Source information:
This 177-nucleotide RNA was probed chemically with 2A3 and DMS. The DMS profile rests on 1,336 reads. For 2A3 the reverse transcriptase was SuperScript II with manganese. For DMS the reverse transcriptase was MarathonRT. The reactions ran in a buffer of 150 mM KOAc, 10 mM MgCl2 and 150 mM bicine (pH 8.5), at 24 C. The 2A3 profile rests on 2,833 reads.
RNA sequence: GGGAACGACUCGAGUAGAGUCGAAAAGACAGUCACUGUCUCUCUCUGUCUCACUCAGAGACAGAGUGACUGACACAGACACUCACAGAGACACAGAGACAGACUGUCAGACACUGUGAGUGACACAGCAUAAUUCGUUCUUCGGAACGAAUUAUGCAAAAGAAACAACAACAACAAC
Reactivity to 2A3 in 0.01 (KOAc 150mM, MgCl2 10mM, bicine 150mM(pH8.5), 24C), signal-to-noise 2, nucleotides 027 to 126: g030a010c000a000g020u040c010a010c060u020g050u010c000u000c000u000c000u000c000u020g020u020c000u000c020a130c030u300c140a090g010a010g000a010c000a000g020a000g020u010g010a030c050u030g020a020c000a000c020a130g180a050c010a000c020u010c000a010c010a010g110a010g030a100c010a030c010a080g060a020g000a020c000a030g090a090c050u040g030u060c010a000g040a010c080a010c020u000g000u010g010a010g030u020g040a000c060a000c000a050
Reactivity to DMS in 0.01 (KOAc 150mM, MgCl2 10mM, bicine 150mM(pH8.5), 24C), signal-to-noise 3, nucleotides 027 to 126: g000a090c020a000g000u000c060a120c030u000g020u000c000u020c020u000c030u000c000u000g000u010c000u000c000a140c260u010c240a080g020a000g010a000c020a030g000a000g000u010g010a050c080u000g010a220c170a120c290a110g020a140c000a020c000u000c000a050c010a030g020a050g010a150c120a060c090a020g020a040g000a000c100a050g010a120c140u000g010u000c030a030g000a200c110a190c000u010g010u000g000a030g020u000g000a180c070a060c170a120